The record gives the reactivity of an RNA of 170 nucleotides to 2A3 and DMS. 2A3 adducts were read by reverse transcription with SuperScript II with manganese. The RNA was probed in 150 mM KOAc, 10 mM MgCl2 and 150 mM bicine (pH 8.5) at 24 C.
RNA sequence: GGGAACGACUCGAGUAGAGUCGAAAAUACAGCGAGACUGGUAGUGAUCUUCUUUACCAACCACCCAACUGUAGCAUAACCUCUGGCGUGUUGCAAAGCGGUUUGGUGAAAAUGUCACAUCCCAGUGGAAGUCAUCGCUUCGGCGAUGACAAAAGAAACAACAACAACAAC
Reactivity to 2A3 in 0.01 (KOAc 150mM, MgCl2 10mM, bicine 150mM(pH8.5), 24C), signal-to-noise 5, nucleotides 027 to 129: u220a020c050a000g070c010g040a060g030a070c000u000g010g000u020a020g000u020g020a000u020c050u040u000c000u000u040u010a000c000c000a000a020c060c070a030c000c020c010a040a060c100u030g010u030a000g010c000a030u040a130a130c020c030u180c150u220g040g000c050g050u010g000u000u000g000c000a010a050a010g040c090g010g000u010u030u030g000g000u010g000a000a000a010a020u080g010u030c000a010c010a130u060c000c000c000a000g010u000g010g060a080a040
Reactivity to DMS in 0.01 (KOAc 150mM, MgCl2 10mM, bicine 150mM(pH8.5), 24C), signal-to-noise 2, nucleotides 027 to 129: u100a100c130a110g000c050g000a190g020a080c030u000g000g000u030a250g020u010g050a050u060c160u040u010c160u000u000u070a040c000c000a030a080c020c040a050c020c030c030a150a140c220u060g030u030a000g050c050a000u010a130a180c070c050u080c190u040g040g030c120g050u030g030u000u040g000c010a010a090a100g000c130g060g020u020u020u070g000g050u000g000a000a000a000a000u060g020u050c050a040c040a170u060c260c000c000a070g110u020g010g030a060a140